[RMDB]
The record gives the reactivity of an RNA of 177 nucleotides to DMS and 2A3. Source: RMDB library OK2TST, as collected in RNAgym. The 2A3 profile rests on 21,396 reads. For DMS, 15,160 sequencing reads were counted. As a SHAPE reagent, 2A3 marks flexible, mostly unpaired nucleotides at the ribose 2'-OH.
RNA sequence: GGGAACGACUCGAGUAGAGUCGAAAACGCAUGCGUCGCAUUGGGCGUCGCAACGACGACGCCGCGCGGCCUCGCCGUGUCGAUCAUCCGGCCGUAAUCGGCGAACCACGGCACGCCGGCGGUUCGCGACUUGUGUUUGUUUCGACAAACACAAGUCAAAAGAAACAACAACAACAAC
Reactivity to DMS in 0.01 (KOAc 150mM, MgCl2 10mM, bicine 150mM(pH8.5), 24C), signal-to-noise 9, nucleotides 027 to 126: c060g010c120a100u000g010c090g020u000c010g020c020a300u010u010g020g010g020c000g010u000c000g020c020a070a060c190g000a160c020g000a050c050g010c000c020g010c070g030c010g010g010c010c050u000c140g010c030c020g000u000g020u000c050g010a100u000c110a120u010c090c090g010g020c020c040g020u010a100a120u010c050g010g000c030g000a030a070c080c030a030c020g000g000c030a070c300g010c000c010g000g000c050g010g000u000u000c030g010c110
Reactivity to 2A3 in 0.01 (KOAc 150mM, MgCl2 10mM, bicine 150mM(pH8.5), 24C), signal-to-noise 8, nucleotides 027 to 126: c060g040c030a050u080g020c030g040u010c010g020c090a120u180u300g210g150g000c000g000u010c010g000c060a040a060c060g140a030c000g000a000c020g000c020c010g000c020g000c000g000g000c000c010u030c040g000c010c000g020u020g060u070c050g060a110u060c010a070u070c070c060g110g000c020c010g080u070a100a180u200c030g030g000c010g000a010a010c030c010a020c010g010g000c030a010c070g020c000c000g010g020c030g000g020u040u040c040g000c040